This 207-nucleotide RNA was probed chemically with 2A3 and DMS. Conditions: 150 mM KOAc, 10 mM MgCl2 and 150 mM bicine (pH 8.5), 24 C.
RNA sequence: GGGAACGACUCGAGUAGAGUCGAAAACCUACUCAAUAAGUCCUCGUCGUACAGAACGGUAACAUGUUUUCCGAACAUCCGCGCUUGGGUAUACGAGUAUACACCUUACCCAACCCUCGCCAACGGGAGUGCAUCCACGAGUUCGCUCGUGGAUGAAGAUCUCCCUAAUCUUCGGAUUAGGGAGAUCAAAAGAAACAACAACAACAAC
Reactivity to 2A3 in 0.01 (KOAc 150mM, MgCl2 10mM, bicine 150mM(pH8.5), 24C), signal-to-noise 4, nucleotides 027 to 156: c000c000u030a050c040u050c040a100a150u130a270a000g040u060c000c000u030c020g050u010c020g010u070a070c060a120g070a190a040c030g010g030u070a060a060c080a220u140g070u040u030u060u060c050c020g030a040a010c020a080u050c040c030g030c020g010c070u040u050g050g000g000u050a040u020a070c050g010a020g080u020a040u040a060c100a090c030c050u060u090a030c000c010c030a040a060c020c000c010u030c020g050c010c030a080a060c020g040g020g020a040g050u070g060c010a000u000c000c000a000c000g010a010g030u110u070c190g050c080u000c000g000u000g000g000a000u000g000a000a000
Reactivity to DMS in 0.01 (KOAc 150mM, MgCl2 10mM, bicine 150mM(pH8.5), 24C), signal-to-noise 1, nucleotides 027 to 156: c020c010u010a060c020u000c080a060a100u020a060a200g020u010c000c000u010c000g010u010c070g050u000a120c060a060g030a050a180c000g010g000u010a060a060c130a050u020g020u020u020u020u000c030c010g000a100a110c020a090u000c000c000g000c030g030c020u000u020g080g020g000u000a100u000a070c060g020a140g020u010a090u010a100c090a060c090c040u000u000a060c000c010c000a060a070c030c020c000u010c030g000c070c020a090a080c020g000g010g010a090g000u000g020c010a000u010c010c000a060c010g000a050g010u010u010c300g070c020u000c010g040u000g010g000a000u000g030a030a060